An RNA of 177 nucleotides, treated with DMS and read out base by base. For DMS the reverse transcriptase was MarathonRT.
RNA sequence: GGGAACGACUCGAGUAGAGUCGAAAACAGGGCGAUGCCGAUGAGGGAUUACUGAAAAUCAAUCGAACCAUCGCGGUUCUGGAACUUUUCAAGCAACGAAUGUUGGACUACAAGGAACGCUAUGCCAAGCGAUUAGCACUUUCGAGUGCUAAUCGCUAAAAGAAACAACAACAACAAC
Reactivity to DMS in 0.01 (KOAc 150mM, MgCl2 10mM, bicine 150mM(pH8.5), 24C), signal-to-noise 1, nucleotides 027 to 126: c070a080g020g010g010c010g020a010u010g050c100c020g070a100u000g010a100g010g020g000a130u000u010a070c170u010g040a030a020a010a000u000c060a080a140u040c100g010a020a100c110c000a050u040c140g010c080g010g000u000u000c010u010g000g010a060a110c100u000u000u000u010c110a040a100g000c060a040a030c020g000a040a080u010g070u010u000g000g010a100c030u010a090c070a100a140g050g000a020a050c140g000c050u000a040u000g010c040c050a190
Annotation:
It was measured as part of the RMDB library OK2TST.